[RMDB]
RNA sequence: GGGAACGACUCGAGUAGAGUCGAAAAGGAGCUGCUGGCCCACAGCAUGCAGCAGCCUGGGUUCAGCUGGAGUGAUGAUGCACGGGGCAGAGGCUGCCGCUCUUCGAGGCAUCAGCUGUCUUUGCUGGCUCAGUCGUAACUUCGGUUACGACUGAGCAAAAGAAACAACAACAACAAC
Reactivity to DMS in 0.01 (KOAc 150mM, MgCl2 10mM, bicine 150mM(pH8.5), 24C), signal-to-noise 1, nucleotides 027 to 126: g020g010a200g000c040u000g010c030u000g030g000c030c010c030a190c120a110g010c100a110u010g010c010a090g020c020a040g000c020c070u010g000g010g020u000u000c050a060g000c050u020g010g000a120g020u010g050a070u000g000a070u000g030c010a030c060g010g010g000g000c050a070g020a100g000g020c100u000g020c010c040g010c020u000c040u020u000c090g010a170g000g010c020a020u000c010a040g000c030u000g010u000c000u000u000u010g020c040u000g010
Reactivity to 2A3 in 0.01 (KOAc 150mM, MgCl2 10mM, bicine 150mM(pH8.5), 24C), signal-to-noise 1, nucleotides 027 to 126: g030g000a000g020c020u020g000c010u040g050g070c000c020c000a080c030a000g100c010a000u150g010c030a000g000c000a000g000c020c000u030g080g000g040u090u240c020a020g000c000u000g030g040a070g060u070g060a080u020g000a010u100g060c030a030c080g020g000g020g070c040a010g010a040g080g070c010u000g090c000c010g030c010u040c000u120u190c050g060a180g070g000c000a010u030c000a020g000c020u040g030u140c000u050u080u150g030c040u030g050
Source information
Structure probing data (DMS and 2A3) for a 177-nucleotide construct.